An RNA of 177 nucleotides, treated with 2A3 and DMS and read out base by base. 2A3 adducts were read by reverse transcription with SuperScript II with manganese. The reactions ran in a buffer of 150 mM KOAc, 10 mM MgCl2 and 150 mM bicine (pH 8.5), at 24 C. The data come from the RNA Mapping Database (RMDB), library OK1LIB.
RNA sequence: GGGAACGACUCGAGUAGAGUCGAAAAAGGGCGGGACUCGAAUCCGCUGCGGUGAGGUCUGCGACCCCGAGUGCCACCAAAGCCGCCACCCAGUCGAUAGUCUCGGCCACACCGGGUGGCUUGUCCACGGAUCAAUUAGAUUCGUCUAAUUGAUCCGAAAAGAAACAACAACAACAAC
Reactivity to 2A3 in 0.01 (KOAc 150mM, MgCl2 10mM, bicine 150mM(pH8.5), 24C), signal-to-noise 9, nucleotides 027 to 126: a000g060g010g010c070g010g010g030a030c040u040c120g070a080a080u060c030c020g040c090u060g020c040g010g050u100g050a100g000g070u040c060u150g090c050g070a180c010c000c010c000g020a040g040u090g090c010c010a050c020c000a050a090a020g060c040c020g000c000c010a000c000c000c000a010g020u020c010g020a020u050a190g140u060c020u010c050g030g020c030c020a130c020a070c040c050g020g000g010u010g000g010c000u010u050g010u000c010c020a040
Reactivity to DMS in 0.01 (KOAc 150mM, MgCl2 10mM, bicine 150mM(pH8.5), 24C), signal-to-noise 6, nucleotides 027 to 126: a070g000g000g000c040g020g020g000a050c020u000c060g000a100a060u020c090c030g000c050u000g010c090g000g010u000g010a120g000g000u030c030u010g000c070g000a100c040c020c040c050g000a050g020u010g010c010c020a080c050c030a040a120a130g000c110c100g010c010c020a020c000c010c010a120g000u000c050g010a050u020a130g010u030c190u000c040g010g000c010c120a070c200a100c150c070g000g000g000u000g000g000c010u000u010g000u020c030c070a220